[RMDB]
RNA sequence: GGGAACGACUCGAGUAGAGUCGAAAAAGCAGGAGAAGGCGGAUGACCCCUUCGGCUGGAUUGUGCCGGUGGCCUGAGUGUCGGGAGCUAAAUGAUAUGGGAGCAGCUUUUUUAUGCUUCAUGUUACCAUCCACUCAUACUUCGGUAUGAGUGGAUGAAAAGAAACAACAACAACAAC
Reactivity to DMS in 0.01 (KOAc 150mM, MgCl2 10mM, bicine 150mM(pH8.5), 24C), signal-to-noise 3, nucleotides 027 to 126: a060g010c030a010g010g020a070g000a060a060g000g020c090g000g010a150u010g000a150c050c020c020c050u000u000c060g010g000c020u020g010g010a140u000u000g000u000g000c050c030g010g020u010g010g020c040c040u010g010a100g000u000g000u000c050g010g020g000a080g000c080u000a060a080a080u010g000a070u010a030u010g010g010g000a020g010c030a060g020c180u000u000u010u010u010u010a070u020g010c030u000u000c050a040u010g010u000u010a100c200
Reactivity to 2A3 in 0.01 (KOAc 150mM, MgCl2 10mM, bicine 150mM(pH8.5), 24C), signal-to-noise 1, nucleotides 027 to 126: a000g030c070a040g000g050a040g020a120a020g020g050c050g050g070a070u120g100a120c000c000c040c020u000u070c020g010g040c000u020g070g070a250u130u140g020u090g090c030c000g050g010u010g000g000c000c000u040g030a030g030u070g000u000c030g000g000g010a000g000c030u080a100a090a100u120g070a020u080a070u180g050g030g000a020g000c000a000g020c080u080u080u020u020u010u100a110u080g000c040u000u000c030a010u120g070u120u060a070c060

Source: RMDB library OK2TRN, as collected in RNAgym. Structure probing data (DMS and 2A3) for a 177-nucleotide construct. 2A3 is a SHAPE reagent: it acylates the 2'-hydroxyl of flexible nucleotides of all four kinds. 2A3 adducts were read by reverse transcription with SuperScript II with manganese. Values are in units of 0.01, from 0 to 300, in steps of 10. For DMS, 3,962 sequencing reads were counted.